[RMDB]
RNA sequence: GGGAACGACUCGAGUAGAGUCGAAAAGAGACCGGCGCACAGAGGAAGAGAAUCUCCGCAAGAAAGGGGAGCCUCACCACGAGCUGCCCCCAGGGAGCACUAAGCGAGCACUGCCCAACAACACCAGAGUCCACAUGUUAUUCGUAACAUGUGGACUAAAAGAAACAACAACAACAAC
Reactivity to 2A3 in 0.01 (KOAc 150mM, MgCl2 10mM, bicine 150mM(pH8.5), 24C), signal-to-noise 4, nucleotides 027 to 126: g140a010g030a020c000c010g000g010c030g020c010a040c020a050g050a050g100g040a050a120g020a030g030a090a050u020c020u000c030c010g100c060a060a050g150a230a140a050g020g000g020g000a020g040c010c000u030c000a060c090c030a070c030g030a030g010c010u130g020c020c000c000c000c000a020g030g010g020a050g000c020a030c060u080a060a050g020c020g020a000g010c040a020c040u090g020c000c010c000a050a080c040a040a010c020a030c000c020a020g020
Reactivity to DMS in 0.01 (KOAc 150mM, MgCl2 10mM, bicine 150mM(pH8.5), 24C), signal-to-noise 4, nucleotides 027 to 126: g000a060g030a040c050c060g000g010c050g040c050a110c070a060g020a050g000g010a090a050g000a050g030a080a110u020c010u010c010c020g030c170a120a090g010a060a110a090g020g000g000g010a050g020c150c020u010c020a110c150c140a130c090g000a100g020c060u020g000c010c010c000c010c030a030g030g000g000a080g010c070a090c030u040a040a090g010c020g000a060g020c010a030c070u010g000c030c030c000a080a050c170a070a040c090a070c120c070a070g000
Chemical mapping of a 177-nucleotide RNA with 2A3 and DMS. Source: RMDB library OK1LIB, as collected in RNAgym. Conditions: 150 mM KOAc, 10 mM MgCl2 and 150 mM bicine (pH 8.5), 24 C. The DMS profile rests on 5,419 reads. High DMS reactivity at an A or C suggests that its Watson-Crick edge is free. The 2A3 profile rests on 3,557 reads. Reactivities are given for positions 27 through 126. For DMS the reverse transcriptase was MarathonRT.